An RNA of 177 nucleotides, treated with DMS and 2A3 and read out base by base. For 2A3, 1,948 sequencing reads were counted. High DMS reactivity at an A or C suggests that its Watson-Crick edge is free. For 2A3 the reverse transcriptase was SuperScript II with manganese. The DMS profile rests on 7,530 reads.
RNA sequence: GGGAACGACUCGAGUAGAGUCGAAAAAUCUCAGCAGCGAAGAAGCGAAAGUGACGGUGGCUGCGGAGGAAGCGCCGACUAACUACGUGCAAGCAGCCACGGUAAUACGUAGGGCGCAAGCGCAUUCAAAUAUUAAAAUAUUCGUAUUUUAAUAUUUAAAAGAAACAACAACAACAAC
Reactivity to DMS in 0.01 (KOAc 150mM, MgCl2 10mM, bicine 150mM(pH8.5), 24C), signal-to-noise 4, nucleotides 027 to 126: a100u010c000u010c010a080g020c080a070g010c030g030a170a100g010a090a150g010c030g000a090a040a070g010u010g020a130c030g010g030u010g000g010c000u000g000c010g000g020a140g010g000a060a110g020c010g010c010c000g020a080c200u040a110a300c060u000a000c020g000u000g000c120a110a140g020c000a000g000c010c000a020c020g010g000u020a060a080u030a050c000g000u010a020g000g000g020c000g040c030a160a110g020c130g020c100a110u010u040c040
Reactivity to 2A3 in 0.01 (KOAc 150mM, MgCl2 10mM, bicine 150mM(pH8.5), 24C), signal-to-noise 3, nucleotides 027 to 126: a000u010c010u010c020a040g010c010a000g000c010g030a150a010g060a110a000g130c000g030a110a060a050g090u060g030a050c040g020g010u010g060g000c010u010g000c050g020g030a080g030g010a050a060g020c010g000c010c000g060a130c080u090a140a020c030u020a070c030g020u060g080c040a110a060g020c000a000g010c000c000a000c000g000g020u090a040a030u140a090c020g000u030a030g040g040g000c000g000c020a040a040g030c050g010c060a000u090u130c030